[RMDB]
Source: RMDB libraries RFM100 and RFMREP, as collected in RNAgym.
Chemical mapping of a 177-nucleotide RNA with DMS and 2A3.

RNA sequence: GGGAACGACUCGAGUAGAGUCGAAAACGUUCAGAAAUACUUGACCACGAGGGUUCCCUAUAGUCCGCGUUGGCGGUGCUGCAACCCCGUGCGAUAGGCUAACUGCGGUAUUCCCCGCACUCCGUCGCGGUAUGAACGAUUUCGAUCGUUCAUACCGAAAAGAAACAACAACAACAAC
Reactivity to DMS in 0.01 (KOAc 150mM, MgCl2 10mM, bicine 150mM(pH8.5), 24C), signal-to-noise 4, nucleotides 027 to 126: c080g000u010u020c050a060g050a110a100a070u000a100c020u000u010g000a300c300c010a040c010g010a080g010g000g000u000u000c060c110c130u000a100u010a050g030u000c000c040g010c000g020u020u020g030g000c010g000g020u050g000c090u000g010c220a080a070c010c010c010c000g010u010g000c000g010a090u000a020g010g000c140u010a050a110c070u000g020c000g010g000u000a180u020u000c000c050c000c120g000c070a090c110u010c030c010g010u020c090g010
Reactivity to 2A3 in 0.01 (KOAc 150mM, MgCl2 10mM, bicine 150mM(pH8.5), 24C), signal-to-noise 6, nucleotides 027 to 126: c020g020u080u080c060a020g110a040a140a020u230a100c010u020u020g010a020c000c000a020c010g030a300g010g000g000u000u050c060c000c000u030a070u090a040g060u010c000c000g050c040g140u110u130g270g000c010g000g010u090g030c030u040g000c030a010a030c000c000c000c000g000u010g010c000g020a010u020a020g030g030c060u050a110a080c020u040g010c020g000g010u050a120u050u070c020c020c000c000g000c010a030c020u010c020c020g110u080c040g010
For DMS the reverse transcriptase was MarathonRT.